Chemical mapping of a 177-nucleotide RNA with 2A3 and DMS. The data come from the RNA Mapping Database (RMDB), libraries RFM100 and RFMREP. 2A3 adducts were read by reverse transcription with SuperScript II with manganese.
RNA sequence: GGGAACGACUCGAGUAGAGUCGAAAAGGCAUUGCUUUUAAGUAUGAUGGGUUCUAUGCAAACUUUGAAAUGCCUUUUUACCUCAUAUUUCAGAAUGCGUGUGCCUAUGCAUUCAUAAUGGAGAGAGCUUCAACAAUGGGUUCGCCCAUUGUUGAAGAAAAGAAACAACAACAACAAC
Reactivity to 2A3 in 0.01 (KOAc 150mM, MgCl2 10mM, bicine 150mM(pH8.5), 24C), signal-to-noise 7, nucleotides 027 to 126: g010g000c010a010u010u040g060c100u060u130u140u140a040a010g030u060a060u180g080a080u100g070g070g080u180u110c110u160a120u140g090c040a060a090a040c020u060u030u090g040a040a020a010u000g000c000c000u000u010u000u020u030a030c010c010u050c010a100u140a100u090u070u070c050a030g010a010a000u010g000c030g000u060g040u110g100c050c030u100a030u060g000c000a000u010u010c020a020u140a060a090u090g030g000a040g010a000g010a000g050
Reactivity to DMS in 0.01 (KOAc 150mM, MgCl2 10mM, bicine 150mM(pH8.5), 24C), signal-to-noise 6, nucleotides 027 to 126: g010g010c010a010u010u000g000c070u000u020u020u030a020a050g010u010a040u020g000a030u000g000g010g020u030u040c090u050a050u030g020c050a060a060a020c020u000u010u010g000a100a020a020u000g000c000c000u000u000u000u000u020a110c050c010u010c100a090u020a070u020u010u010c130a130g000a010a010u000g000c010g020u000g020u030g010c200c130u030a040u000g020c010a010u000u000c000a050u010a080a100u000g000g010a040g010a150g010a180g010